[RMDB]
The record gives the reactivity of an RNA of 207 nucleotides to 2A3 and DMS. For DMS, 6,366 sequencing reads were counted. As a SHAPE reagent, 2A3 marks flexible, mostly unpaired nucleotides at the ribose 2'-OH. For DMS the reverse transcriptase was MarathonRT.
RNA sequence: GGGAACGACUCGAGUAGAGUCGAAAAUUUUAUAGAGGCAGGGUCUCACUGUGUUGCCCAGGCUGGUCUCAAACUCCUAGGCUCAAGUGAUUCUCCCACUUCAACCUUCCAAAGUGUUGGGAUUACUGGCUGGGUGCAGUGGCUCACGCCUGUAAUCCCUAACCCUAUUGUUCGCAAUAGGGUUAGGAAAAGAAACAACAACAACAAC
Reactivity to 2A3 in 0.01 (KOAc 150mM, MgCl2 10mM, bicine 150mM(pH8.5), 24C), signal-to-noise 2, nucleotides 027 to 156: u050u060u130u120a230u060a070g060a030g020g010c060a020g050g000g030u050c090u070c150a040c020u030g000u040g130u300u210g030c020c000c020a060g090g030c090u130g010g010u080c040u000c020a030a080a100c030u030c010c090u050a010g010g000c000u000c050a030a020g010u010g000a080u150u020c050u030c060c010c000a020c000u050u040c040a050a040c010c020u050u030c070c080a130a090a010g040u080g080u030u030g060g010g020a040u070u150a170c070u060g110g000c000u020g000g000g040u150g010c040a060g060u090g070g000c000u010c020a010c070g000c010c000u000g030u030a040a040u020c040
Reactivity to DMS in 0.01 (KOAc 150mM, MgCl2 10mM, bicine 150mM(pH8.5), 24C), signal-to-noise 2, nucleotides 027 to 156: u000u010u000u000a190u010a160g000a080g030g020c030a150g010g010g010u000c000u020c020a030c030u000g020u000g050u000u000g030c020c020c000a030g000g000c050u020g030g000u000c030u000c140a040a050a050c030u000c020c020u000a070g020g020c000u000c120a050a030g010u000g000a200u000u000c070u000c090c030c000a060c030u000u010c030a010a050c030c020u020u000c050c040a070a110a110g010u000g010u010u000g010g010g010a040u000u000a050c030u000g010g020c010u010g010g000g010u000g000c030a150g000u000g010g020c030u000c020a020c080g020c010c000u000g000u000a030a130u000c020